[RMDB]
RNA sequence: GGGAACGACUCGAGUAGAGUCGAAAAAGACAUGGACAACAGGUUCUAAAGGCUGGUGCUGGAAAUUACCAGAUGCACUCAAGGAUAUGGGUGUGUUCGGGCAAAACAUGUUUUUCCACUCACUAGGAUCUUCCCAAACCUUCGGGUUUGGGAAGAUAAAAGAAACAACAACAACAAC
Reactivity to 2A3 in 0.01 (KOAc 150mM, MgCl2 10mM, bicine 150mM(pH8.5), 24C), signal-to-noise 2, nucleotides 027 to 126: a000g030a000c040a010u140g000g050a010c040a140a010c030a100g090g050u110u070c060u130a090a050a000g100g040c010u050g030g050u040g070c020u010g010g040a030a080a070u080u050a090c000c000a040g000a020u050g000c000a000c000u010c000a060a040g300g030a190u150a130u230g000g000g010u020g010u000g050u050u030c020g010g040g000c080a050a000a020a100c000a040u060g130u020u000u000u010u010c000c010a000c040u200c010a040c050u010a020g000g180
Reactivity to DMS in 0.01 (KOAc 150mM, MgCl2 10mM, bicine 150mM(pH8.5), 24C), signal-to-noise 1, nucleotides 027 to 126: a040g000a060c000a000u000g020g030a080c080a010a100c160a080g000g000u000u010c050u000a030a170a150g000g000c010u000g020g050u000g000c300u000g000g000a040a110a060u050u030a140c000c010a020g030a000u040g040c000a010c000u010c010a000a290g030g040a070u040a050u000g010g050g000u000g000u000g000u000u000c070g020g000g000c200a040a060a050a050c180a000u030g000u000u020u000u000u000c010c030a050c130u000c100a070c100u000a020g000g020
An RNA of 177 nucleotides, treated with 2A3 and DMS and read out base by base. 2A3 adducts were read by reverse transcription with SuperScript II with manganese. High 2A3 reactivity points to a flexible backbone, as in loops and unpaired stretches. Values are in units of 0.01, from 0 to 300, in steps of 10. For DMS the reverse transcriptase was MarathonRT. The data come from the RNA Mapping Database (RMDB), library OK1LIB. For 2A3, 973 sequencing reads were counted.